[RMDB]
RNA sequence: GGGAACGACUCGAGUAGAGUCGAAAAGUUAUGCUCGCGCUGCCUAAUGGCGGUGCGGGAAACCCACUCUAAAGUCCUUAGGGUUAGCCCCUUAAGGCGGGGUUCGGAGGCACCUGGCAACAGAAGCUGAAACUGUGCACAUUCGUGUGCACAGUAAAUAGUAACAGGUGUUCGCACCUGUUACUAUAAAAGAAACAACAACAACAAC
Reactivity to 2A3 in 0.01 (KOAc 150mM, MgCl2 10mM, bicine 150mM(pH8.5), 24C), signal-to-noise 2, nucleotides 027 to 156: g020u060u120a200u300g100c020u010c000g000c010g020c010u010g000c000c000u300a300a290u280g000g050c000g000g000u000g000c030g000g000g040a060a000a000c010c010c000a030c010u150c060u130a120a110a280g300u020c010c000u000u010a000g000g000g020u010u040a030g020c000c010c010c010u030u060a000a000g000g000c000g010g010g000g000u000u250c080g090g010a000g010g020c000a000c030c000u030g250g020c000a020a000c000a010g020a000a000g000c000u010g000a010a010a010c000u000g010u000g010c000a000c000a020u050u120c250g000u010g010u000g010c000a000c050a000g000u000a000a000